[RMDB]
RNA sequence: GGGAACGACUCGAGUAGAGUCGAAAACUGCUUCUUGGGGACAAGGAUGUCCUCAUUUCCUGAGCAUCUACCAGGAGCCAGCCCCAUGCCAGACUUCAUUUGUCCUCGGUGGUCAUCAACUGAAAACAGAGGCUGUGGUGUCACCGGUCCCUUGGGGGACCCCUAUGAGCUUCGGCUCAUAGGGGUCAAAAGAAACAACAACAACAAC
Reactivity to 2A3 in 0.01 (KOAc 150mM, MgCl2 10mM, bicine 150mM(pH8.5), 24C), signal-to-noise 1, nucleotides 027 to 156: c010u020g030c000u000u030c010u040u060g010g000g050g070a060c080a100a080g170g010a200u080g040u150c070c060u020c010a020u080u060u080c010c040u010g010a010g020c020a060u020c000u110a130c030c010a010g000g010a030g030c030c010a010g050c000c000c000c000a030u040g000c020c000a000g010a010c000u080u080c040a100u190u100u300g060u180c010c010u030c010g120g000u080g040g080u060c010a060u010c010a080a300c080u050g020a030a060a000a080c030a060g050a040g060g080c040u030g000u000g000g000u020g000u000c010a040c060c140g000g020u020c060c000c010u080u080g000g000g000g080

This 207-nucleotide RNA was probed chemically with 2A3. 2A3 adducts were read by reverse transcription with SuperScript II with manganese. Values cover nucleotides 27 to 156. For 2A3, 502 sequencing reads were counted.